[RMDB]
RNA sequence: GGGAACGACUCGAGUAGAGUCGAAAAGAAAUAACUGUCGAAAGCAUGAGAGUGCGUAAAAUAAAAGCGAGCGAGCGAGCGAAAUAAAUAAUAGCGUGGAAAAGACAGGAAAGAAACAUGCGAAAGAGGGUUACAUUAUCUUCGGAUAAUGUAACCCAAAAGAAACAACAACAACAAC
Reactivity to DMS in 0.01 (KOAc 150mM, MgCl2 10mM, bicine 150mM(pH8.5), 24C), signal-to-noise 2, nucleotides 027 to 126: g030a010a150a100u050a070a160c090u000g000u000c050g000a190a020a060g010c050a000u020g010a150g010a160g000u010g000c000g010u000a080a040a050a060u020a020a090a160a200g020c020g000a070g000c070g010a120g000c010g030a220g030c000g000a030a010a080u020a010a010a050u000a000a150u090a100g000c000g030u010g010g000a050a160a050a180g000a050c030a050g000g040a040a010a140g000a100a030a140c040a020u000g000c010g000a040a010a040g040a110
Reactivity to 2A3 in 0.01 (KOAc 150mM, MgCl2 10mM, bicine 150mM(pH8.5), 24C), signal-to-noise 1, nucleotides 027 to 126: g000a000a060a140u120a080a160c000u000g000u020c000g000a030a030a030g060c040a000u140g000a000g000a000g020u040g000c020g000u080a000a190a200a000u150a060a070a060a050g010c000g000a110g000c050g040a040g190c000g040a020g000c060g170a000a000a290u290a040a000a120u300a120a000u300a020g000c000g110u070g090g000a100a040a040a030g050a000c110a060g020g040a000a000a000g020a000a050a000c000a060u070g030c070g100a030a040a040g000a080